[RMDB]
RNA sequence: GGGAACGACUCGAGUAGAGUCGAAAAGAUAUGGAUCAGUGGUAUGGAACCACCAUAGCGAGGUUGAGUCGGAAACGACUCAACUCCCCACCGCUAUGAAGUGAAACAUACGUAACAUCUGAUCCUAAGUCAAAAGAAUGAGCUUCGGCUCAUUCAAGAGCCUACUACAGUUCGCUGUAGUAGGCUCAAAAGAAACAACAACAACAAC
Reactivity to 2A3 in 0.01 (KOAc 150mM, MgCl2 10mM, bicine 150mM(pH8.5), 24C), signal-to-noise 2, nucleotides 027 to 156: g000a000u030a000u030g000g000a000u010c010a000g000u060g050g020u050a000u020g000g010a040a020c000c000a000c000c000a000u000a000g010c000g010a010g010g000u000u000g010a000g000u010c010g000g000a010a010a010c000g000a000c000u010c000a000a000c000u010c010c000c000c000a020c000c000g020c010u000a010u020g050a150a050g000u000g000a000a030a000c000a000u000a010c030g080u140a070a090c060a170u130c010u000g000a000u000c010c000u010a030a000g000u020c030a090a000a100a080g090a000a000u120g000a000g010c030u080u110c300g150g000c010u030c010a120u160u060c010a000a020